Background
Structure probing data (2A3 and DMS) for a 177-nucleotide construct. For 2A3 the reverse transcriptase was SuperScript II with manganese. For DMS the reverse transcriptase was MarathonRT.
RNA sequence: GGGAACGACUCGAGUAGAGUCGAAAAGACAAGUGCUUCGGCACUUGUCAAAUAAGCUAGUAGAAAUGGCCAAACUACAUGCAUCGAAAGAAAGGCCAUAAAAAACUGUCCAGUUCGCUGGACAGAACUAUACUGACACGUUCGCGUGUCAGUAUAGAAAAGAAACAACAACAACAAC
Reactivity to 2A3 in 0.01 (KOAc 150mM, MgCl2 10mM, bicine 150mM(pH8.5), 24C), signal-to-noise 2, nucleotides 027 to 126: g000a000c000a010a000g000u010g020c040u050u160c250g020g020c000a000c010u000u010g010u000c010a000a000a000u000a010a000g010c010u040a030g010u010a000g040a030a060a020u010g000g030c000c020a050a040a010c030u010a010c020a030u070g010c000a130u140c140g160a100a080a070g120a070a120a030g080g000c010c010a010u050a000a040a000a010a000a020c000u000g000u000c010c000a010g010u020u080c190g060c050u000g000g000a000c000a010g000a010a000
Reactivity to DMS in 0.01 (KOAc 150mM, MgCl2 10mM, bicine 150mM(pH8.5), 24C), signal-to-noise 2, nucleotides 027 to 126: g000a000c010a000a000g020u000g010c020u000u020c250g030g040c000a010c000u010u000g010u010c000a000a070a040u000a100a110g000c030u000a220g020u000a020g010a010a030a010u000g030g010c010c000a140a090a040c010u000a010c000a160u010g010c000a170u010c130g000a050a070a080g000a040a070a100g040g000c030c000a090u000a000a020a020a090a050a120c010u010g000u000c000c000a010g000u000u010c160g020c020u000g020g010a010c010a010g000a020a090
For 2A3, 3,283 sequencing reads were counted.